[RMDB]
Annotation:
An RNA of 177 nucleotides, treated with 2A3 and DMS and read out base by base. Reactivities are given for positions 27 through 126. The RNA was probed in 150 mM KOAc, 10 mM MgCl2 and 150 mM bicine (pH 8.5) at 24 C. The data come from the RNA Mapping Database (RMDB), library OK1LIB.

RNA sequence: GGGAACGACUCGAGUAGAGUCGAAAAGACCCCUCGUCACAAUAAAGAUAGGGGGGCAACUAAAGGAAGCUCUAUUAGAUACAGGAGCAGAUGAUACAGUAUUAGAAGAAAUGAGUUUGCCAGGAAGCAGUCACUUAGAUUUCGAUCUAAGUGACUGAAAAGAAACAACAACAACAAC
Reactivity to 2A3 in 0.01 (KOAc 150mM, MgCl2 10mM, bicine 150mM(pH8.5), 24C), signal-to-noise 6, nucleotides 027 to 126: g260a070c000c000c000c000u000c000g020u000c020a030c040a110a290u240a200a190a030g010a030u150a300g000g010g000g000g000g000c000a010a000c020u140a050a050a140g040g000a080a010g030c000u000c000u010a090u150u090a060g050a110u060a050c040a030g030g090a020g080c070a070g000a110u160g010a020u110a140c050a030g050u070a070u110u220a070g130a080a000g030a030a100a070u150g000a020g040u030u060u080g130c040c050a040g060g030a040a000g020
Reactivity to DMS in 0.01 (KOAc 150mM, MgCl2 10mM, bicine 150mM(pH8.5), 24C), signal-to-noise 4, nucleotides 027 to 126: g010a210c000c000c000c030u010c000g000u000c010a080c170a140a140u030a100a140a110g010a010u000a100g060g000g000g000g030g010c060a050a040c090u000a030a080a090g010g010a090a090g020c010u000c010u010a190u020u020a190g010a100u020a020c060a060g000g020a080g010c070a070g000a090u010g000a090u010a080c050a080g030u000a030u010u010a090g010a100a060g000a060a060a070u020g000a010g010u000u000u030g010c030c020a050g010g010a090a090g030